[RMDB]
RNA sequence: GGGAACGACUCGAGUAGAGUCGAAAAAGACCACCUCUACGGAGGUGGUCAAGUCACGUAGCUAGUACCAGGUUGCAAUACUAGAGCGUUAGUCCUGGGGCGUACGGUGGCAGUACGCUGACACCGAUAAAACUUGAAUACUUCGGUAUUCAAGUAAGAAGUUAUGGUUCUUCGGAACCAUAACUUCAAAAGAAACAACAACAACAAC
Reactivity to 2A3 in 0.01 (KOAc 150mM, MgCl2 10mM, bicine 150mM(pH8.5), 24C), signal-to-noise 2, nucleotides 027 to 156: a000g020a000c000c000a000c010c010u020c010u050a100c300g160g010a000g010g010u000g010g000u000c000a000a020g000u010c000a010c020g000u040a020g150c010u000a000g000u070a290c000c010a000g000g000u020u050g030c010a000a000u000a010c000u000a000g000a020g030c080g090u100u230a010g010u060c000c010u000g000g000g040g050c150g060u190a060c020g010g020u000g010g000c000a020g000u040a000c280g070c060u000g000a010c010a000c000c000g010a030u100a110a120a000a010c000u000u010g010a000a030u000a000c000u010u030c210g090g010u010a000u020u000c000a000a000g010u000a010a060